Overview: The record gives the reactivity of an RNA of 207 nucleotides to DMS and 2A3. For DMS, 3,399 sequencing reads were counted. Reactivities are given for positions 27 through 156. As a SHAPE reagent, 2A3 marks flexible, mostly unpaired nucleotides at the ribose 2'-OH.

[RMDB]
RNA sequence: GGGAACGACUCGAGUAGAGUCGAAAAACAAAGAACUAAAUUUCUCACUAGGUUCAGCUGUCAAAUAUAUCACUCGUGCGGGUCAUAAGGAAGGGUCAACGAAAGAAGAAGACCUACGAAAAGCGAUUAAGUUCCUUGAAUUCGAGCUUAACAAAGGACCUAUUAGUCAGUUCGCUGACUAAUAGGUAAAAGAAACAACAACAACAAC
Reactivity to DMS in 0.01 (KOAc 150mM, MgCl2 10mM, bicine 150mM(pH8.5), 24C), signal-to-noise 2, nucleotides 027 to 156: a040c020a100a130a070g010a050a110c030u000a060a070a240u000u000u000c030u010c010a170c060u000a090g050g000u000u020c040a120g020c040u000g000u010c040a110a100a120u000a050u000a080u020c090a060c030u010c040g040u020g020c090g020g010g040u010c030a070u000a060a060g000g010a090a100g020g000g020u000c030a070a220c110g040a060a040a130g000a110a130g010a060a280g020a080c020c000u000a090c050g020a050a060a070a100g020c060g040a070u000u000a040a040g000u000u000c000c010u000u010g020a110a190u000u000c050g000a040g010c010u000u020a030a040c060a010a070a130g010g000
Reactivity to 2A3 in 0.01 (KOAc 150mM, MgCl2 10mM, bicine 150mM(pH8.5), 24C), signal-to-noise 4, nucleotides 027 to 156: a000c080a030a120a060g040a040a020c060u170a130a110a180u060u120u020c050u010c020a040c030u070a040g030g030u030u040c020a020g020c030u050g040u130c020a010a150a010u110a020u040a030u170c040a020c070u040c030g030u060g030c050g030g000g030u030c020a060u040a160a040g020g020a050a050g030g000g000u020c020a020a040c070g140a130a050a130g060a040a010g020a030a010g020a050c020c010u030a000c010g050a000a060a040a020g080c030g010a010u060u130a070a030g030u020u010c020c030u090u090g130a100a080u130u090c050g010a010g000c020u050u060a040a010c070a120a080a060g080g030

Conditions: 150 mM KOAc, 10 mM MgCl2 and 150 mM bicine (pH 8.5), 24 C.